About this RNA: This 207-nucleotide RNA was probed chemically with 2A3. High 2A3 reactivity points to a flexible backbone, as in loops and unpaired stretches. Reactivities are given for positions 27 through 156. For 2A3, 488 sequencing reads were counted.
RNA sequence: GGGAACGACUCGAGUAGAGUCGAAAAGGGGGUGAUGAGCUGGGUGGAAAGCAAGUUGCGCAAGAGCUGUGACUUGCCGCAGCCGGUGGGCCCGUAGAUGACAGCUAUGACGGGUUGCAGGGUGUAGUUUAGGGAGCUACAACUGCCAUCAUCCUUCGUUGCGAAAUCUUUUCGAAGAUUUCGCAACAAAAGAAACAACAACAACAAC
Reactivity to 2A3 in 0.01 (KOAc 150mM, MgCl2 10mM, bicine 150mM(pH8.5), 24C), signal-to-noise 1, nucleotides 027 to 156: g000g010g000g000g050u000g030a020u000g000a000g080c150u300g090g100g130u010g110g160a110a000a000g010c000a000a000g000u030u030g040c020g020c010a180a120g060a040g300c110u120g000u000g050a020c000u000u000g000c010c000g040c090a020g040c000c000g050g000u020g000g000g020c000c000c000g010u010a020g000a090u170g040a040c060a040g040c060u070a010u070g060a000c010g000g000g000u010u100g030c000a020g180g000g020u090g000u030a000g000u010u020u100a030g090g040g020a040g010c010u000a030c000a030a030c000u000g000c010c030a000u000c000a000u000c050c040u000u100c020